[RMDB]
Background: The record gives the reactivity of an RNA of 177 nucleotides to DMS. The RNA was probed in 150 mM KOAc, 10 mM MgCl2 and 150 mM bicine (pH 8.5) at 24 C.
RNA sequence: GGGAACGACUCGAGUAGAGUCGAAAAUUCAUGGCGGGGCCUGUGCAUACCCCGUUUCAUCACCGGUUUGCAAACCUGAUUAGAGCGCACACUAUAAGUAGCAGGAAGGGCGUAGAUUCUUUGAACAUCAUGGCUAAGUCUUCGGACUUAGCCAUGAAAAAGAAACAACAACAACAAC
Reactivity to DMS in 0.01 (KOAc 150mM, MgCl2 10mM, bicine 150mM(pH8.5), 24C), signal-to-noise 2, nucleotides 027 to 126: u000u010c070a070u010g020g020c000g000g000g000g040c080c060u030g100u010g050c010a110u030a300c000c000c000c010g010u000u010u020c040a000u040c170a060c120c020g000g000u050u050u010g000c110a080a060a090c020c000u030g000a060u020u040a080g000a040g000c010g040c000a030c200a120c090u030a060u050a050a100g020u020a020g030c040a110g000g010a040a040g000g010g030c080g000u000a030g010a070u010u000c000u000u010u010g000a080a050c200a140